[RMDB]
RNA sequence: GGGAACGACUCGAGUAGAGUCGAAAAAGCAGGACCGCGUUACGACGCGGUCCUGCAGCAAUGAGUAGAAGCGGUCAAAUUUGUUGUCGAGUUCCAACAAACCAAAUUCGGGCAUUGCUCACUGCAAAAAACUCUCUUUAGUUCGCUAAAGAGAGAAGACUACAUUAGAGUUCGCUCUAAUGUAGUCAAAAGAAACAACAACAACAAC
Reactivity to 2A3 in 0.01 (KOAc 150mM, MgCl2 10mM, bicine 150mM(pH8.5), 24C), signal-to-noise 2, nucleotides 027 to 156: a000g030c040a020g020g030a050c040c000g110c060g000u030u100a130c300g010a030c000g030c000g000g000u020c000c000u000g010c000a000g000c000a000a000u010g010a000g030u070a020g030a090a000g000c080g060g010u070c030a090a050a050u040u040u020g020u010u000g050u090c090g080a050g130u220u140c070c010a020a000c000a000a060a040c050c030a020a060a090u090u130c030g020g020g010c040a040u000u080g000c000u020c000a000c010u050g010c030a060a000a020a020a080a100c010u000c000u000c000u000u000u000a000g000u030u040c190g000c110u000a000a000a000g010a000g000a010g000a030a000

The data come from the RNA Mapping Database (RMDB), library M2RFPK. This 207-nucleotide RNA was probed chemically with 2A3. As a SHAPE reagent, 2A3 marks flexible, mostly unpaired nucleotides at the ribose 2'-OH. Values cover nucleotides 27 to 156. The reactions ran in a buffer of 150 mM KOAc, 10 mM MgCl2 and 150 mM bicine (pH 8.5), at 24 C.